[RMDB]
RNA sequence: GGGAACGACUCGAGUAGAGUCGAAAAAGUUCUAGUCCUCACCUAAGAUCAGACUGACAAGGCCCUCAAAGCAAGAGCACUUGGUUGGGCUUUGUGGUGGGGAUGAGUGUCUCAUUUUUAGUCCCAAAUUAAAAACGAGAUUUUGGGCUGUACAUCAUAGUAAAAUACGAUUCGUCGUAUUUUACUAAAAAGAAACAACAACAACAAC
Reactivity to DMS in 0.01 (KOAc 150mM, MgCl2 10mM, bicine 150mM(pH8.5), 24C), signal-to-noise 4, nucleotides 027 to 156: a080g010u000u010c030u000a190g010u010c010c010u010c010a050c020c010u000a110a110g010a190u000c060a140g000a160c070u000g000a140c010a030a040g020g000c010c000c000u000c030a060a080a100g000c060a060a140g020a170g030c120a050c010u010u000g010g030u010u010g020g020g030c010u000u000u000g030u000g020g020u000g010g020g000g020a010u010g000a100g020u000g010u000c000u010c020a050u000u000u000u000u010a040g010u000c030c070c090a090a060a110u010u000a030a020a010a020a040c020g010a050g000a140u000u000u000u000g010g000g030c060u000g000u000a060c090a140u000c050a300
Reactivity to 2A3 in 0.01 (KOAc 150mM, MgCl2 10mM, bicine 150mM(pH8.5), 24C), signal-to-noise 6, nucleotides 027 to 156: a000g070u070u040c010u020a020g030u010c000c000u010c000a010c000c010u080a100a030g030a120u150c070a040g180a250c050u150g000a010c020a010a000g030g000c000c000c010u070c070a070a070a010g030c020a100a060g060a040g140c060a060c130u050u020g090g020u130u050g010g020g000c000u000u000u010g030u010g000g000u000g000g000g000g000a000u010g000a000g010u060g050u020c010u010c060a130u050u140u080u090u230a030g070u150c000c000c000a000a020a010u040u100a040a040a030a020a020c110g030a080g020a150u030u040u020u010g000g000g000c020u040g060u130a040c030a130u120c030a040